Conditions: 150 mM KOAc, 10 mM MgCl2 and 150 mM bicine (pH 8.5), 24 C. An RNA of 177 nucleotides, treated with 2A3 and read out base by base.
RNA sequence: GGGAACGACUCGAGUAGAGUCGAAAAAGCGCCGUACUACGGUACGGCGCACGGCAGAUGAUGAUUUUACUUGGAUUCCCCUUCAGAACAUUUAUGGGUGUUGCAAACUCCAAGCUUCUGAUGCUAAUGUCUCCGUUCAAUUCGUUGAACGGAGACAAAAAGAAACAACAACAACAAC
Reactivity to 2A3 in 0.01 (KOAc 150mM, MgCl2 10mM, bicine 150mM(pH8.5), 24C), signal-to-noise 2, nucleotides 027 to 126: a020g060c070g000c040c020g090u000a000c000u000a040c300g180g000u000a000c000g000g020c000g070c000a000c020g080g010c090a060g030a140u080g000a040u000g000a000u130u020u110u000a020c000u020u070g050g000a070u050u020c000c020c000c000u050u030c000a000g010a070a010c050a130u120u080u100a110u300g060g040g070u100g020u190u160g250c070a080a050a130c000u070c040c000a020a050g020c090u010u000c000u040g000a000u020g070c000u030a250a030